[RMDB]
RNA sequence: GGGAACGACUCGAGUAGAGUCGAAAAGUAUAAAAUACAAUGUAUGUUAGAAGUUGUUUCAGAAGGCUAUGGUUUUCUGAUUUUUUUAUGCUCAGUAGUGAUAUGCAAAAAAGACAAAGUUGACAUCGUUACUGGAGAAAUUCGUUUCUCCAGUAACAAAAGAAACAACAACAACAAC
Reactivity to 2A3 in 0.01 (KOAc 150mM, MgCl2 10mM, bicine 150mM(pH8.5), 24C), signal-to-noise 2, nucleotides 027 to 126: g070u030a000u040a020a070a020a020u280a090c030a030a040u160g030u220a170u170g090u240u080a070g000a090a070g000u000u050g040u010u030u010c000a000g000a000a000g000g060c060u070a050u300g050g020u090u070u000u010c000u000g050a040u070u000u000u000u000u000u140a090u000g000c000u000c080a010g000u080a000g020u090g210a080u040a000u230g040c050a000a000a000a000a000a000g100a000c100a000a000a230g000u000u000g000a030c010a020u210c010
Reactivity to DMS in 0.01 (KOAc 150mM, MgCl2 10mM, bicine 150mM(pH8.5), 24C), signal-to-noise 2, nucleotides 027 to 126: g030u000a020u040a050a050a060a300u000a030c030a060a100u040g020u000a060u010g000u000u000a070g000a110a240g020u000u010g000u000u000u000c010a050g000a110a050g010g010c070u000a050u040g000g010u000u000u000u000c030u000g010a010u010u000u000u000u000u000u000a100u020g000c000u000c050a060g010u010a040g000u000g020a070u010a040u000g000c020a000a020a050a080a030a100g000a020c140a050a050a070g000u000u000g010a090c150a080u000c150
An RNA of 177 nucleotides, treated with 2A3 and DMS and read out base by base. For DMS the reverse transcriptase was MarathonRT. 2A3 adducts were read by reverse transcription with SuperScript II with manganese.